[RMDB]
RNA sequence: GGGAACGACUCGAGUAGAGUCGAAAAAGGAAUGACCCUCAUCGGACUACGCGAUCCGAGUGAUGGGAAUGGCUGACCCAUCGCUCGGCACUGGAGGGUGAGUGCCCCUCAUUCGCAUAAGGGCCGACCCAGACAACAGCCAAGUUUGGGUCGGAGACCAAUAACUUAUCUUCGGAUAAGUUAUUGGAAAAGAAACAACAACAACAAC
Reactivity to DMS in 0.01 (KOAc 150mM, MgCl2 10mM, bicine 150mM(pH8.5), 24C), signal-to-noise 2, nucleotides 027 to 156: a080g020g000a060a080u000g040a120c000c000c010u000c020a100u000c030g060g040a290c090u000a090c100g000c050g000a200u010c000c010g010a020g020u000g010a020u010g010g020g030a040a030u000g030g000c010u000g010a240c010c000c010a010u000c020g030c000u000c010g030g000c060a000c070u010g000g000a210g000g010g010u000g010a050g020u000g020c030c030c010c010u000c040a210u000u000c060g030c080a150u010a130a140g010g000g010c000c000g020a030c000c000c000a070g010a010c000a040a050c030a040g000c030c010a120a180g000u000u010u000g000g020g020u000c000g020g010a180g000a180
Reactivity to 2A3 in 0.01 (KOAc 150mM, MgCl2 10mM, bicine 150mM(pH8.5), 24C), signal-to-noise 4, nucleotides 027 to 156: a000g110g010a080a040u100g030a030c000c000c010u000c010a050u050c030g110g030a140c120u200a090c300g020c030g110a050u020c020c000g000a000g010u010g000a000u000g000g000g000a040a070u040g010g000c010u020g090a190c010c000c000a000u000c010g010c000u000c000g010g020c020a040c040u110g050g010a020g020g030g010u020g010a020g030u120g060c010c000c020c000u070c030a100u140u050c030g010c110a050u100a260a150g100g060g000c000c000g000a000c000c000c000a000g010a000c040a130a010c020a040g000c000c000a000a020g000u000u010u000g000g000g000u000c000g000g010a000g000a000